An RNA of 177 nucleotides, treated with 2A3 and DMS and read out base by base.
It was measured as part of the RMDB library OK1LIB.
Reactivities are given for positions 27 through 126.

[RMDB]
RNA sequence: GGGAACGACUCGAGUAGAGUCGAAAAGAAGACGUGACGAAAAGUCACGUCAAUACAGAGACUACGUAACUCUGAAAAACACAACAAAAGUGUAAAAACGUAGCAGGAUCGAGAGAUCCUGAAAAGACCUUUUAAUAGCGUUCGCGCUAUUAAAAGGAAAAGAAACAACAACAACAAC
Reactivity to 2A3 in 0.01 (KOAc 150mM, MgCl2 10mM, bicine 150mM(pH8.5), 24C), signal-to-noise 6, nucleotides 027 to 126: g170a120a020g000a000c000g010u010g000a000c020g110a170a190a040a070g000u000c000a000c000g000u000c000a000a000u040a000c010a000g000a000g000a010c000u010a000c000g040u070a080a050c010u000c000u000g040a020a010a000a020a000c050a030c040a180a100c050a110a160a090a070g010u020g000u060a070a080a000a000a000c010g000u010a000g000c000a000g000g000a000u000c000g000a010g000a000g000a200u000c000c000u000g010a000a000a000a000g040a030
Reactivity to DMS in 0.01 (KOAc 150mM, MgCl2 10mM, bicine 150mM(pH8.5), 24C), signal-to-noise 4, nucleotides 027 to 126: g000a260a110g020a020c000g030u000g000a000c010g000a090a100a110a150g000u010c000a010c000g010u000c000a040a060u030a280c030a010g000a010g000a110c010u000a000c000g000u010a120a040c000u000c000u030g000a050a090a040a140a050c030a000c010a030a120c300a120a140a140a080g010u000g000u020a030a010a010a100a070c010g000u010a000g000c010a000g010g000a000u000c000g010a190g000a230g000a000u000c000c010u000g000a040a010a060a100g010a190
The 2A3 profile rests on 10,879 reads. Conditions: 150 mM KOAc, 10 mM MgCl2 and 150 mM bicine (pH 8.5), 24 C. For DMS, 5,038 sequencing reads were counted.